[RMDB]
RNA sequence: GGGAACGACUCGAGUAGAGUCGAAAAAUCUGUAACAGACACUGUGCUAGACGUUUUCAUAUAUGUGAACCUCAUGUAAUACAACCACACCCUGAAGUACAAAGCACCAAUCCUCAUUCUACCAAUACGUAAACUGAGGCUCAGAGGAUUUAAAUGAAGAUGAUGAAUAGUUCGCUAUUCAUCAUCUAAAAGAAACAACAACAACAAC
Reactivity to 2A3 in 0.01 (KOAc 150mM, MgCl2 10mM, bicine 150mM(pH8.5), 24C), signal-to-noise 6, nucleotides 027 to 156: a000u020c050u030g050u060a080a040c030a060g080a050c040a010c090u050g010u040g030c030u060a030g030a110c040g010u020u020u070u080c100a050u150a040u030a050u230g050u030g050a050a060c000c010u030c040a020u050g040u120a130a060u070a160c030a040a050c020c010a040c010a020c050c020c010u030g030a030a000g020u040a050c050a030a100a010g040c020a010c050c030a030a030u050c000c000u010c010a050u110u030c020u040a070c030c030a120a050u110a150c050g050u080a030a060a090c060u040g030a010g050g000c020u040c030a030g010a030g010g020a010u050u090u160a150a170a100u110g050a050
Reactivity to DMS in 0.01 (KOAc 150mM, MgCl2 10mM, bicine 150mM(pH8.5), 24C), signal-to-noise 4, nucleotides 027 to 156: a080u000c040u020g020u010a080a160c060a100g000a090c030a060c060u000g020u010g030c030u000a050g020a120c090g020u000u000u010u010c060a100u000a100u000a060u010g030u010g020a040a050c030c030u010c070a100u000g030u010a080a110u000a060c070a090a110c030c030a060c020a080c040c030c020u000g020a040a100g010u000a120c040a040a070a120g020c040a070c030c020a050a060u000c010c000u010c020a130u000u010c020u000a050c010c040a050a160u010a120c130g030u010a040a060a090c060u020g010a110g020g000c080u010c070a100g010a060g000g020a130u000u000u000a060a070a120u010g010a170
An RNA of 207 nucleotides, treated with 2A3 and DMS and read out base by base. The DMS profile rests on 7,328 reads. 2A3 adducts were read by reverse transcription with SuperScript II with manganese. 2A3 is a SHAPE reagent: it acylates the 2'-hydroxyl of flexible nucleotides of all four kinds.